[RMDB]
RNA sequence: GGGAACGACUCGAGUAGAGUCGAAAAACAAAGUUGCACUUCUGUGCAUUUGAAGACUUGGCCCUCAGUCCGAUUGCUUGCACAUAACUACCUUCAGUUAGUCUGAUUGGUUGCUAUGUGCAGCCAAUCAGAGGUUGGUUGCUGUGUGCAACCAAUCCUAGAUUAUUACCUUCGGGUAAUAAUCUAGAAAAGAAACAACAACAACAAC
Reactivity to DMS in 0.01 (KOAc 150mM, MgCl2 10mM, bicine 150mM(pH8.5), 24C), signal-to-noise 3, nucleotides 027 to 156: a120c040a060a070a100g010u000u000g020c010a040c030u000u010c170u000g060u000g030c010a060u010u000u010g010a170a100g000a070c070u000u000g020g010c010c000c000u010c070a130g010u000c030c020g000a090u000u000g010c070u010u000g020c020a020c020a040u000a020a030c000u000a040c030c010u000u000c030a140g010u000u000a140g000u000c030u000g010a030u000u000g020g030u000u010g010c000u000a070u010g020u000g010c000a010g000c060c010a020a010u010c010a030g010a020g020g020u000u000g000g000u000u010g040c000u000g040u000g010u010g030c010a010a040c040c000a010a050u000c020
Reactivity to 2A3 in 0.01 (KOAc 150mM, MgCl2 10mM, bicine 150mM(pH8.5), 24C), signal-to-noise 8, nucleotides 027 to 156: a000c050a030a060a020g130u130u070g020c020a020c030u280u210c210u300g020u020g010c020a030u050u050u120g080a080a030g030a030c040u070u100g060g010c020c010c000u060c070a030g040u030c030c040g020a020u000u020g010c010u020u030g000c010a000c000a010u030a020a020c010u030a010c030c000u030u030c030a160g080u120u260a070g080u080c020u000g010a020u030u010g000g010u000u010g000c010u080a120u300g100u210g020c000a000g000c000c000a000a000u010c010a000g010a010g010g000u020u010g000g010u000u020g000c050u020g020u020g000u030g030c000a000a000c010c000a000a010u000c000